[RMDB]
RNA sequence: GGGAACGACUCGAGUAGAGUCGAAAAGAUAUGGAGUAAGGGAGCGCCCGGAUGGUCGGAAACGACCAUGUCGGAACUACGCUCCCUACUCCUAAGUCAAACCCAUGCGUCUUCGGACGCAUGGGAACCUGUAAUCUCCGUUCGCGGAGAUUACAGGAAAAGAAACAACAACAACAAC
Reactivity to 2A3 in 0.01 (KOAc 150mM, MgCl2 10mM, bicine 150mM(pH8.5), 24C), signal-to-noise 1, nucleotides 027 to 126: g020a000u040a040u100g020g000a020g030u150a300a300g130g000g010a000g000c070g200c110c020c000g010g020a010u010g000g020u010c000g010g000a080a050a010c020g000a000c030c030a000u030g100u050c000g000g040a070a120c130u300a060c130g010c000u020c000c000c000u010a000c000u000c000c000u000a010a000g020u000c000a000a000a160c030c000c010a010u000g000c000g010u000c010u050u070c160g150g000a010c000g000c000a000u010g000g020g000a000a040
Reactivity to DMS in 0.01 (KOAc 150mM, MgCl2 10mM, bicine 150mM(pH8.5), 24C), signal-to-noise 1, nucleotides 027 to 126: g020a060u000a190u010g000g000a020g030u000a060a060g000g010g000a000g030c000g060c300c000c000g030g000a000u000g000g010u010c000g000g020a040a030a160c010g010a000c000c000a000u000g010u010c030g000g000a170a100c150u030a160c020g000c000u000c000c000c000u000a000c020u010c000c000u000a010a030g010u000c010a130a080a250c000c000c010a010u000g000c000g040u000c000u010u010c170g000g000a000c000g000c000a000u020g000g000g000a000a000